[RMDB]
RNA sequence: GGGAACGACUCGAGUAGAGUCGAAAAGCCAGACCCAGGCGCCUUGUCCGAACUGGGGUCUGAGUGAGGACAUGCGUCCGUCCCUGCCCUAGGCAUGGAGAUGCGCCAGGAAGGGCACAGCUGGUCCCAAACACUGGCGAGAGCCUCUCUUUUUCCACACUGGAUGGAUAUUCGUAUCCAUCCAGUGAAAAGAAACAACAACAACAAC
Reactivity to DMS in 0.01 (KOAc 150mM, MgCl2 10mM, bicine 150mM(pH8.5), 24C), signal-to-noise 1, nucleotides 027 to 156: g030c040c000a030g190a300c030c010c020a300g050g000c030g000c010c020u030u000g030u000c050c020g050a090a180c040u030g000g020g040g050u000c010u010g000a030g030u020g020a300g010g010a020c010a180u010g020c220g030u010c000c000g000u000c020c020c210u000g030c040c010c020u000a040g010g010c080a130u000g030g000a300g010a150u000g040c030g130c020c010a090g000g000a120a100g020g000g070c100a180c190a050g000c010u020g000g000u000c000c000c050a130a120a040c050a130c050u000g080g000c020g010a120g000a240g040c010c010u000c040u000c040u020u000u000u010u000c020c120a300
Reactivity to 2A3 in 0.01 (KOAc 150mM, MgCl2 10mM, bicine 150mM(pH8.5), 24C), signal-to-noise 3, nucleotides 027 to 156: g040c000c000a000g000a110c010c000c020a020g000g010c030g040c020c020u210u120g180u050c010c020g050a140a100c010u010g010g010g010g000u070c260u040g100a100g040u240g050a020g000g010a010c060a080u300g160c230g030u010c020c000g190u070c010c010c000u010g000c000c000c000u010a020g050g000c130a130u170g010g000a030g010a030u040g020c020g000c010c000a000g060g030a010a110g010g010g020c050a010c030a100g180c030u100g050g010u110c000c010c010a010a060a010c070a020c040u050g000g010c020g010a050g010a020g070c050c010u070c020u010c020u060u070u010u130u010c060c020a040